Source: RMDB library TTRDEL, as collected in RNAgym. An RNA of 177 nucleotides, treated with 2A3 and DMS and read out base by base.
RNA sequence: GGGAACGACUCGAGUAGAGUCGAAAAGAUAUGGACUUCAGACAGACAUGCUAUGUCGGAAACGAUUGUAGCAACAGCUGUUAGAAGUCCUAAGUCAAAGGUUCUCCUAGUUCGCUAGGAGAACCAAUCACCUUGCAAAGUUCGCUUUGCAAGGUGAAAAAGAAACAACAACAACAAC
Reactivity to 2A3 in 0.01 (KOAc 150mM, MgCl2 10mM, bicine 150mM(pH8.5), 24C), signal-to-noise 1, nucleotides 027 to 126: g020a010u030a040u120g010g000a020c000u030u000c040a000g020a060c010a040g030a070c050a180u080g020c000u020a010u050g010u000c000g020g100a040a020a010c020g000a030u100u300g050u070a010g130c010a060a080c060a150g300c000u010g050u080u090a140g000a000a000g000u020c000c000u000a020a020g020u020c000a090a000a100g010g000u020u000c010u050c000c020u020a010g050u080u090c300g060c160u000a010g000g000a000g000a000a000c000c000a000a000
Reactivity to DMS in 0.01 (KOAc 150mM, MgCl2 10mM, bicine 150mM(pH8.5), 24C), signal-to-noise 1, nucleotides 027 to 126: g030a040u000a300u000g010g050a010c000u030u000c010a300g060a030c000a020g010a090c100a210u000g000c000u000a010u000g030u000c000g000g010a090a080a190c060g000a020u010u020g070u000a010g040c010a050a090c180a100g000c000u000g000u000u000a150g000a000a000g070u000c000c000u000a000a010g050u000c010a110a120a110g000g000u000u010c050u000c000c000u000a000g000u000u010c300g000c020u000a000g010g000a000g000a040a020c000c000a000a040

The reactions ran in a buffer of 150 mM KOAc, 10 mM MgCl2 and 150 mM bicine (pH 8.5), at 24 C.